[RMDB]
The record gives the reactivity of an RNA of 177 nucleotides to 2A3 and DMS. The 2A3 profile rests on 33,646 reads. Reactivities are rounded to 0.1 and cut off at 0 and 3. The RNA was probed in 150 mM KOAc, 10 mM MgCl2 and 150 mM bicine (pH 8.5) at 24 C. The data come from the RNA Mapping Database (RMDB), library OK2TST.

RNA sequence: GGGAACGACUCGAGUAGAGUCGAAAAGAAGUAGAAGCCGAGCCACGGUUCGACCACGGUGUCGAUAUAGAGCGCGCCGCAUUCGCGGACAAAGCGCAUCAGGUCGAGCGAGCUUGUAUCGACGGAAACUAUAAUAGCGAUUCGUCGCUAUUAUAGUAAAAGAAACAACAACAACAAC
Reactivity to 2A3 in 0.01 (KOAc 150mM, MgCl2 10mM, bicine 150mM(pH8.5), 24C), signal-to-noise 9, nucleotides 027 to 126: g040a060a010g020u140a020g020a140a010g060c040c010g010a010g030c020c030a120c070g050g010u030u020c010g020a020c010c020a070c100g080g030u120g040u090c030g030a000u010a010u030a120g160a020g020c030g000c020g010c010c010g030c020a080u250u220c120g000c010g010g020a030c080a040a100a010g030c010g000c010a010u050c040a010g050g030u090c010g000a010g020c010g000a010g010c010u020u030g010u030a030u030c010g010a010c010g040g050a150a080
Reactivity to DMS in 0.01 (KOAc 150mM, MgCl2 10mM, bicine 150mM(pH8.5), 24C), signal-to-noise 9, nucleotides 027 to 126: g010a130a120g010u010a080g010a120a160g020c070c020g020a080g010c030c050a110c110g020g010u010u000c020g010a040c010c030a130c140g010g010u010g000u000c020g010a040u010a090u000a070g010a100g010c040g010c050g010c000c010g010c040a170u000u010c150g010c000g010g000a090c130a050a070a130g000c010g010c070a060u000c110a080g010g010u010c010g010a080g010c020g000a120g010c040u010u000g010u010a080u000c010g010a040c030g000g000a110a090